[RMDB]
This 177-nucleotide RNA was probed chemically with DMS and 2A3.

RNA sequence: GGGAACGACUCGAGUAGAGUCGAAAAUUCUUGCUACAGGCUCUAAUGAUAAAACUAUCCGAUUGAUGGCAUUCAAUGAGGAUUCUUGUCGAAUAGGUGCGGAAAUGGAGUUGACAUGCCAUGAUGAAUCCAUAGUGAUGUUCGCAUCACUAUGGAUAAAAGAAACAACAACAACAAC
Reactivity to DMS in 0.01 (KOAc 150mM, MgCl2 10mM, bicine 150mM(pH8.5), 24C), signal-to-noise 5, nucleotides 027 to 126: u000u000c010u000u000g010c050u010a070c120a120g030g000c040u010c040u000a050a080u010g010a080u020a040a080a080a100c100u000a030u000c020c040g000a080u000u000g010a030u000g000g000c050a070u000u000c020a010a020u010g010a300g010g000a060u000u000c040u000u010g040u010c030g010a090a100u000a060g020g010u010g030c030g000g010a050a050a060u000g010g010a260g010u000u000g010a040c180a040u010g000c000c020a020u000g010a100u000g000a120
Reactivity to 2A3 in 0.01 (KOAc 150mM, MgCl2 10mM, bicine 150mM(pH8.5), 24C), signal-to-noise 2, nucleotides 027 to 126: u010u000c000u000u090g040c000u040a020c030a100g050g100c000u000c020u110a160a120u170g060a040u080a090a140a030a040c040u060a040u100c010c010g120a080u030u120g090a040u070g080g010c020a020u020u030c000a010a030u080g020a080g180g040a000u000u000c020u060u160g050u030c000g030a150a140u090a220g130g000u090g020c030g000g020a010a040a040u060g040g030a030g020u030u030g020a020c010a060u040g000c000c010a020u040g050a060u090g040a020
The 2A3 profile rests on 1,783 reads. It was measured as part of the RMDB library OK2TRN. For DMS, 5,817 sequencing reads were counted. Conditions: 150 mM KOAc, 10 mM MgCl2 and 150 mM bicine (pH 8.5), 24 C. For 2A3 the reverse transcriptase was SuperScript II with manganese. DMS adducts were read by reverse transcription with MarathonRT.